[RMDB]
About this RNA: The record gives the reactivity of an RNA of 177 nucleotides to 2A3 and DMS.
RNA sequence: GGGAACGACUCGAGUAGAGUCGAAAACCCGUGAACCUUUACUAUAGCUUCGCAUUGGUAUUGGAUAAUUAAUGUGUAGGAUAGGUCGGAGACAUUGAAGCAGGCACGCUAGUGUUUGUGGAGUCGCUCCCCUUAGGAUGUUCGCAUCCUAAGGGGAAAAAGAAACAACAACAACAAC
Reactivity to 2A3 in 0.01 (KOAc 150mM, MgCl2 10mM, bicine 150mM(pH8.5), 24C), signal-to-noise 4, nucleotides 027 to 126: c010c000c000g020u080g040a040a060c010c020u150u120u120a050c030u040a050u050a100g100c010u050u050c040g000c030a040u020u020g000g030u100a110u090u240g210g010a070u100a150a000u100u040a030a030u070g010u010g050u070a030g020g010a070u010a040g050g000u030c010g050g020a100g020a060c010a030u140u070g030a010a000g030c000a010g000g020c010a000c020g100c120u110a100g010u010g020u000u010u010g020u040g020g000a010g000u010c010g000c000
Reactivity to DMS in 0.01 (KOAc 150mM, MgCl2 10mM, bicine 150mM(pH8.5), 24C), signal-to-noise 3, nucleotides 027 to 126: c000c010c010g020u020g000a140a080c050c020u010u010u030a080c070u000a030u000a130g020c030u000u000c120g020c020a060u000u020g030g010u000a040u010u040g020g000a090u020a040a030u010u030a040a050u000g010u010g010u000a020g010g000a040u010a030g010g020u010c130g000g000a180g010a040c050a140u010u020g000a140a130g020c020a020g010g000c000a010c030g030c220u010a080g030u000g010u000u000u000g000u000g000g000a000g000u000c010g000c150